[RMDB]
This 177-nucleotide RNA was probed chemically with 2A3 and DMS. For 2A3, 19,248 sequencing reads were counted. The data come from the RNA Mapping Database (RMDB), library OK1LIB. The RNA was probed in 150 mM KOAc, 10 mM MgCl2 and 150 mM bicine (pH 8.5) at 24 C.
RNA sequence: GGGAACGACUCGAGUAGAGUCGAAAAGGCGCGUAGCAAUGUUAGUGAUAACUUACAGCAUAACUGUAGACGUUAAGACAAUGUGAACAGCUAGCACUACUGAUGGCGAGACACGACAUGCUAAUGCGAUUAUAUAAUAAUUCGUUAUUAUAUAAUCAAAAGAAACAACAACAACAAC
Reactivity to 2A3 in 0.01 (KOAc 150mM, MgCl2 10mM, bicine 150mM(pH8.5), 24C), signal-to-noise 9, nucleotides 027 to 126: g090g000c010g000c010g050u020a000g000c030a070a110u030g010u020u030a110g010u030g100a110u040a100a020c000u010u060a020c020a020g030c030a100u080a260a080c010u020g010u010a010g040a140c080g010u010u030a070a020g070a050c030a060a080u130g030u040g060a020a020c010a020g010c000u020a000g000c010a010c030u070a020c010u040g030a040u050g050g010c020g010a010g010a010c010a000c010g020a000c000a010u020g000c000u040a070a000u060g010c010
Reactivity to DMS in 0.01 (KOAc 150mM, MgCl2 10mM, bicine 150mM(pH8.5), 24C), signal-to-noise 9, nucleotides 027 to 126: g010g000c030g010c020g030u010a030g010c010a050a070u010g010u010u010a080g030u020g000a120u010a040a040c050u020u000a040c040a040g010c150a120u040a110a180c030u000g000u000a020g000a090c130g010u000u010a030a080g010a080c120a070a080u030g010u010g000a000a090c140a130g010c020u000a030g000c050a060c150u010a070c090u000g010a090u010g000g010c030g010a110g000a160c040a030c020g010a030c020a020u010g000c020u000a060a000u000g010c100